[RMDB]
Conditions: 150 mM KOAc, 10 mM MgCl2 and 150 mM bicine (pH 8.5), 24 C.
This 207-nucleotide RNA was probed chemically with 2A3.
For 2A3 the reverse transcriptase was SuperScript II with manganese.

RNA sequence: GGGAACGACUCGAGUAGAGUCGAAAAAUGGUCAUUUCAAAGAGGGCUCAUGGAGUUGUGAAACCAAGAGCUCUUAACGCUGUGACCAAAUAUUGAAGUUCUCUGCAGGAUGCUGUAACACUAAAUAGUGCUAUGUUUUCCUGAGGAGAGGUACAAACGAGUUGAAAGUGUUCGCACUUUCAACUCGAAAAGAAACAACAACAACAAC
Reactivity to 2A3 in 0.01 (KOAc 150mM, MgCl2 10mM, bicine 150mM(pH8.5), 24C), signal-to-noise 1, nucleotides 027 to 156: a000u090g000g000u010c000a030u000u030u030c070a150a110a050g040a010g000g000g020c010u010c020a070u030g040g080a160g070u180u270g090u070g180a110a030a000c000c000a020a020g000a000g020c000u000c010u000u000a010a000c030g070c040u040g000u020g000a000c000c000a010a040a000u040a020u020u070g100a060a010g050u070u000c000u000c010u010g080c010a010g000g000a010u010g000c010u010g040u120a090a020c020a010c000u090a070a100a300u190a180g000u010g010c010u020a000u140g030u010u210u110u000c010c000u020g000a000g020g000a000g000a000g000g000u100a040c090a020a030a010
Source: RMDB library RFM130, as collected in RNAgym. Reactivities are given for positions 27 through 156. The 2A3 profile rests on 500 reads.